The record gives the reactivity of an RNA of 177 nucleotides to 2A3 and DMS.
High 2A3 reactivity points to a flexible backbone, as in loops and unpaired stretches.
The reactions ran in a buffer of 150 mM KOAc, 10 mM MgCl2 and 150 mM bicine (pH 8.5), at 24 C.
Source: RMDB library OK2TST, as collected in RNAgym.
2A3 adducts were read by reverse transcription with SuperScript II with manganese.
RNA sequence: GGGAACGACUCGAGUAGAGUCGAAAAAUGGAAGUGCUAAGGGCAUCCAGGGCCCUGCUGCUGCUCAGGGAGCUUGGCACUGAUAUGGGAUACCCCCAGCAGCACUGCUGGGACCUCCCCUAGCUUCGUUAAGAUGAUCGUUCGCGAUCAUCUUAACAAAAGAAACAACAACAACAAC
Reactivity to 2A3 in 0.01 (KOAc 150mM, MgCl2 10mM, bicine 150mM(pH8.5), 24C), signal-to-noise 2, nucleotides 027 to 126: a000u130g040g000a030a000g020u020g020c010u030a030a050g070g090g060c040a060u000c060c040a010g050g030g020c030c020c020u040g010c040u060g020c020u050g000c010u010c050a040g060g020g000a020g040c000u030u030g010g000c020a010c020u010g010a040u040a110u200g000g010g000a010u120a090c000c030c050c000c000a000g000c010a000g020c050a050c250u030g050c000u000g000g000g020a030c010c010u030c040c020c010c000u020a030g070c020u110u100c050
Reactivity to DMS in 0.01 (KOAc 150mM, MgCl2 10mM, bicine 150mM(pH8.5), 24C), signal-to-noise 4, nucleotides 027 to 126: a050u010g010g000a260a040g000u000g010c000u010a060a020g020g000g040c120a080u000c020c030a080g000g010g020c010c130c060u010g000c110u000g000c130u000g020c050u000c040a110g010g010g010a060g000c010u010u010g000g000c030a030c010u000g000a260u010a030u000g000g000g010a120u010a150c280c080c000c010c020a010g000c010a040g000c260a130c270u020g010c000u000g010g000g010a050c070c090u000c020c000c010c090u000a070g010c110u000u010c300